RNA sequence: GGGAACGACUCGAGUAGAGUCGAAAAAGAAAGGAUACCGAAAGGUAUCCAAUUUGCACAUUGGAUUGCGGUAACCUCUCACGUGUGACGUUGAAGUAACUAUGUGCAGAAAUACCGCAAGAAAAAAGUAAUAUAAGACGUUCGCGUCUUAUAUUACAAAAGAAACAACAACAACAAC
Reactivity to 2A3 in 0.01 (KOAc 150mM, MgCl2 10mM, bicine 150mM(pH8.5), 24C), signal-to-noise 2, nucleotides 027 to 126: a000g090a030a040a000g000g000a000u000a000c010c010g070a080a010a010g000g000u000a000u010c000c000a000a000u000u000u030g020c020a010c020a070u020u100g150g060a100u070u040g030c010g010g000u010a030a030c000c000u000c000u010c010a000c020g080u110g110u130g120a040c050g020u040u130g100a180a050g020u020a030a010c020u020a010u070g010u010g000c020a000g040a010a050a010u040a000c000c000g000c000a020a020g040a080a080a020a020a000a000
Reactivity to DMS in 0.01 (KOAc 150mM, MgCl2 10mM, bicine 150mM(pH8.5), 24C), signal-to-noise 3, nucleotides 027 to 126: a080g000a080a070a300g000g000a020u000a000c000c000g020a090a050a130g000g000u010a000u000c000c000a020a030u010u000u000g000c090a060c100a090u000u000g010g000a300u000u010g020c010g000g010u010a050a080c190c100u000c010u000c000a010c010g010u000g000u000g010a050c020g020u000u020g000a080a130g000u000a020a050c000u000a000u010g000u000g010c090a010g000a040a050a130u010a020c000c000g010c020a030a060g020a010a040a050a050a080a120